[RMDB]
RNA sequence: GGGAACGACUCGAGUAGAGUCGAAAACACUUGUGUAUCUGUAGUGCUUGCCUGAGAUUGUGAUUGAAUUGUAUUCGGAGGUGUAUGAUGUCCUGGUCCAGGUUGAAGGGUCUGCUCAUGUGACUGAGGUGCUUAUAUGUUUCGACAUAUAAGCACCAAAAGAAACAACAACAACAAC
Reactivity to 2A3 in 0.01 (KOAc 150mM, MgCl2 10mM, bicine 150mM(pH8.5), 24C), signal-to-noise 2, nucleotides 027 to 126: c040a020c000u060u040g030u020g010u100a100u080c040u000g060u050a010g040u000g080c050u040u090g040c030c010u020g040a130g000a070u050u110g050u040g100a040u070u120g100a090a130u060u090g030u100a090u050u080c020g040g100a060g000g060u040g020u070a100u110g040a070u060g050u010c000c010u000g000g000u020c050c030a010g000g000u010u070g060a060a050g050g010g030u000c030u030g010c000u030c020a070u110g030u020g040a020c010u030g010a000
Reactivity to DMS in 0.01 (KOAc 150mM, MgCl2 10mM, bicine 150mM(pH8.5), 24C), signal-to-noise 5, nucleotides 027 to 126: c070a090c100u010u000g010u000g010u000a110u000c050u010g020u000a050g030u000g010c070u000u010g020c050c020u010g010a140g000a080u000u000g010u000g020a090u000u000g010a070a110u010u010g010u000a260u000u010c050g010g010a080g010g010u000g010u000a050u000g000a080u000g010u000c030c040u000g010g010u000c030c060a040g000g010u000u000g000a070a120g010g020g000u010c040u010g010c040u000c050a080u000g020u000g000a230c050u000g010a260
Background:
The data come from the RNA Mapping Database (RMDB), library OK2TST. An RNA of 177 nucleotides, treated with 2A3 and DMS and read out base by base. For DMS, 7,696 sequencing reads were counted. The 2A3 profile rests on 1,732 reads. DMS adducts were read by reverse transcription with MarathonRT. Values are in units of 0.01, from 0 to 300, in steps of 10. 2A3 adducts were read by reverse transcription with SuperScript II with manganese. Values cover nucleotides 27 to 126. Conditions: 150 mM KOAc, 10 mM MgCl2 and 150 mM bicine (pH 8.5), 24 C.